[RMDB]
RNA sequence: GGGAACGACUCGAGUAGAGUCGAAAAAGAUGGCGGCGUUUGCAUGGGAUGUAGUAGCCGCAUGCUUACCGGGAGUGGCAAGGCGGCUAAAGAAUAAAUCUACUAACGAAAGUCCAGAAACUCGUCAAUGCUAGGACCGUUUCGACGGUCCUAGCAUAAAAGAAACAACAACAACAAC
Reactivity to 2A3 in 0.01 (KOAc 150mM, MgCl2 10mM, bicine 150mM(pH8.5), 24C), signal-to-noise 2, nucleotides 027 to 126: a000g110a050u020g030g000c060g030g060c100g020u030u010u000g100c140a190u040g100g000g000a020u080g010u050a020g010u020a000g000c010c000g000c000a000u000g020c000u220u190a170c000c000g070g150g000a210g070u000g000g010c030a080a090g090g000c010g000g000c010u030a070a070a000g090a070a030u130a100a040a040u020c020u030a020c000u000a030a140c070g130a170a000a000g010u000c000c000a000g050a030a000a000c000u000c000g010u000c000a080
Reactivity to DMS in 0.01 (KOAc 150mM, MgCl2 10mM, bicine 150mM(pH8.5), 24C), signal-to-noise 1, nucleotides 027 to 126: a020g030a230u010g000g000c000g000g000c230g040u000u020u000g000c020a300u030g000g000g020a000u000g060u000a030g020u000a010g030c020c020g000c010a000u000g060c010u000u010a060c040c020g000g040g000a080g060u020g010g010c020a020a080g040g020c000g040g000c050u000a010a090a100g000a180a300u000a010a120a000u050c000u000a100c060u000a150a040c190g000a030a130a280g000u000c000c010a150g000a000a020a030c000u000c000g030u000c000a040